[RMDB]
RNA sequence: GGGAACGACUCGAGUAGAGUCGAAAAGAUAUGGAAAUUGAAAUCCGACGAUCCGUAACAUCACUCGGAAACGAGUGUGGGGGAGGAUAUGUAGAUUUCCUAAGUCAAAGCCAUCUUCGGAUGGCAAUCUGAUUCAACUGUUCGCAGUUGAAUCAGAAAAAGAAACAACAACAACAAC
Reactivity to DMS in 0.01 (KOAc 150mM, MgCl2 10mM, bicine 150mM(pH8.5), 24C), signal-to-noise 2, nucleotides 027 to 126: g010a050u010a300u000g000g030a010a000a020u000u010g000a090a070a050u000c000c020g000a050c270g000a010u000c000c000g010u030a080a160c130a050u000c000a000c010u000c000g010g000a100a120a140c010g000a010g010u000g010u000g030g000g000g000g020a050g000g010a010u000a040u000g000u000a120g000a000u000u000u000c000c000u000a080a170g000u000c050a050a090a140g000c000c000a000u000c010u010u010c180g030g000a000u000g000g020c010a020a010
Reactivity to 2A3 in 0.01 (KOAc 150mM, MgCl2 10mM, bicine 150mM(pH8.5), 24C), signal-to-noise 1, nucleotides 027 to 126: g000a000u070a040u130g000g010a000a020a010u050u000g020a030a030a020u000c010c000g060a150c010g010a300u010c000c010g090u100a090a090c020a180u290c010a030c010u010c000g050g000a040a080a050c030g010a000g000u000g010u030g000g030g000g000g000a010g010g000a010u010a020u150g010u000a010g000a020u020u000u000c000c000u040a120a020g060u040c040a100a080a000g030c000c010a000u000c000u010u060c220g200g010a010u000g000g030c010a000a010
The data come from the RNA Mapping Database (RMDB), library TTRDEL. An RNA of 177 nucleotides, treated with DMS and 2A3 and read out base by base. DMS adducts were read by reverse transcription with MarathonRT. The DMS profile rests on 1,293 reads. For 2A3, 2,517 sequencing reads were counted.